[RMDB]
Overview
This 177-nucleotide RNA was probed chemically with 2A3.
RNA sequence: GGGAACGACUCGAGUAGAGUCGAAAAUGAUAAAUAAGGUUAACGGGCACGUCCGGAUUAUGAGCUUCAUAGAGCCGUCUCUAUGGGAUGGCUAUUCCUCUCUCGACCCUAAUUGUCGGCGGUCAUGGGACCAGCUAGCUUUCGAGCUAGCUGGUCCAAAAGAAACAACAACAACAAC
Reactivity to 2A3 in 0.01 (KOAc 150mM, MgCl2 10mM, bicine 150mM(pH8.5), 24C), signal-to-noise 1, nucleotides 027 to 126: u030g000a000u080a210a260a030u150a220a000g130g000u160u160a100a000c080g040g000g000c150a030c070g140u070c040c000g000g000a000u030u260a040u080g040a000g030c000u090u020c000a150u000a000g030a100g010c000c000g000u000c000u000c040u040a100u260g000g190g000a000u000g000g000c000u050a110u030u050c000c020u050c000u000c000u000c000g020a030c000c000c000u120a160a110u100u080g040u000c030g010g150c120g000g000u050c040a080u120g040

For 2A3, 371 sequencing reads were counted.